This 207-nucleotide RNA was probed chemically with 2A3 and DMS. The reactions ran in a buffer of 150 mM KOAc, 10 mM MgCl2 and 150 mM bicine (pH 8.5), at 24 C. For DMS, 3,434 sequencing reads were counted.
[RMDB]
RNA sequence: GGGAACGACUCGAGUAGAGUCGAAAAAUACACCAGCAGUAGGACUCAGCGACCGUCACAACAAGUUUGUGCUGGUAUCCGACGGUCGUAUAGCCCUGUCUUGCAGGUUGCCUUGCACUGACGUGCCACACCAUUUACAGAUUCGUCUGUAAAUGAAGAGUUAGUAAGCUUUCGAGCUUACUAACUCAAAAGAAACAACAACAACAAC
Reactivity to 2A3 in 0.01 (KOAc 150mM, MgCl2 10mM, bicine 150mM(pH8.5), 24C), signal-to-noise 4, nucleotides 027 to 156: a000u160a020c080a000c010c000a010g000c010a000g020u040a010g010g010a030c020u030c090a020g010c000g000a000c000c000g010u020c010a020c010a090a140c030a120a140g050u070u160u140g140u250g070c040u060g000g080u060a100u080c080c070g000a000c000g000g000u010c000g010u040a050u060a010g000c000c000c010u040g030u120c060u060u180g010c010a010g020g000u060u080g040c010c000u060u090g000c010a020c020u180g070a050c140g000u030g050c040c010a070c000a020c040c000a000u000u000u000a010c000a000g020a020u030u110c120g070u010c100u010g000u000a000a000a000u010g000a040a010
Reactivity to DMS in 0.01 (KOAc 150mM, MgCl2 10mM, bicine 150mM(pH8.5), 24C), signal-to-noise 2, nucleotides 027 to 156: a090u010a100c030a210c050c000a110g000c000a060g030u010a030g020g040a050c000u000c150a300g000c000g010a030c010c010g000u020c010a130c050a150a040c030a030a070g020u000u010u000g030u000g040c030u010g010g000u010a060u020c080c030g020a030c050g030g010u000c050g050u010a060u010a060g050c000c000c000u000g030u000c040u000u010g010c020a060g030g000u010u000g020c030c110u000u000g010c000a070c000u000g000a150c150g030u020g000c000c120a180c040a120c090c000a000u000u000u000a010c000a030g000a080u000u000c260g020u010c000u000g010u000a000a000a000u000g000a050a110